[RMDB]
RNA sequence: GGGAACGACUCGAGUAGAGUCGAAAAGUAAGAUGAUUCGUCAUCUUACGAACCCGAUGAAGCGCCACAUACCGAGCUUCAUACAUCUAAGAGUGCAAAUAAUGGCGCGUGGUUUCGACCACGCGAACACAAAUUACAAGUUCGCUUGUAAUUUGUGAAAAGAAACAACAACAACAAC
Reactivity to DMS in 0.01 (KOAc 150mM, MgCl2 10mM, bicine 150mM(pH8.5), 24C), signal-to-noise 9, nucleotides 027 to 126: g000u000a000a000g010a010u000g000a020u000u010c190g010u000c000a000u000c000u000u000a000c000g010a070a140c010c000c010g020a030u000g000a020a030g010c010g010c060c100a110c220a110u010a100c210c100g000a100g010c010u000u000c010a020u000a090c110a060u000c100u010a080a080g010a080g020u000g010c140a060a070a080u010a080a080u010g010g010c010g010c000g030u000g000g000u000u000u010c180g010a040c000c000a000c000g010c010g000a030a110
Reactivity to 2A3 in 0.01 (KOAc 150mM, MgCl2 10mM, bicine 150mM(pH8.5), 24C), signal-to-noise 9, nucleotides 027 to 126: g000u000a010a000g000a000u020g010a010u020u100c130g060u010c080a010u000c000u000u000a000c000g000a020a030c010c000c000g000a020u030g010a020a010g000c020g060c090c060a100c040a160u190a130c110c100g040a020g010c000u010u000c000a010u040a050c040a050u050c050u140a130a050g100a070g150u130g080c090a080a080a110u180a130a120u260g190g010c010g000c010g000u010g000g010u040u060u120c190g060a020c000c000a000c000g000c000g000a010a000